RNA sequence: GGGAACGACUCGAGUAGAGUCGAAAAUCCUAAGUCGAUCCGAAGAACGUGAGGAAGAAGUAUGGUUGUCAGUUCUCUCGGAAACGAGAGAACUUGGAUUUACCAUAUGUAAACUCACGGGAGGAUCGAUAUGGAAAAACCACGUCUUCGGACGUGGGCACCAAUGUCUAUUCGUAGACAUUGGUGCAAAAGAAACAACAACAACAAC
Reactivity to 2A3 in 0.01 (KOAc 150mM, MgCl2 10mM, bicine 150mM(pH8.5), 24C), signal-to-noise 5, nucleotides 027 to 156: u010c010c000u040a130a010g020u000c000g000a000u000c000c010g120a190a050g010a080a040c010g000u000g000a000g020g000a020a300g000a010a000g100u000a000u000g000g000u000u010g020u020c010a000g000u000u000c000u000c000u000c000g020g000a090a030a040c010g000a000g000a000g000a010a000c010u010u080g050g010a000u210u120u150a010c000c000a010u000a000u030g000u000a000a000a000c000u000c000a010c000g000g000g000a020g000g000a000u000c000g000a000u000a070u050g030g020a060a100a020a010a040c010c020a000c000g000u000c010u070u080c210g120g000a000c000g000u000g000g010
Reactivity to DMS in 0.01 (KOAc 150mM, MgCl2 10mM, bicine 150mM(pH8.5), 24C), signal-to-noise 2, nucleotides 027 to 156: u000c020c070u020a050a220g030u000c010g040a040u000c010c000g000a260a210g080a190a210c000g050u000g020a050g010g010a070a160g020a130a300g000u010a010u010g000g020u020u000g050u000c000a020g000u010u000c000u000c010u020c000g000g030a120a060a250c010g000a060g010a010g000a010a000c010u000u000g020g030a030u000u010u000a030c000c000a000u020a010u000g030u000a040a230a300c010u000c000a000c000g050g000g000a280g040g000a050u000c020g000a000u000a040u000g020g020a070a040a030a060a210c000c000a030c050g010u000c000u000u020c300g000g030a000c000g000u000g000g010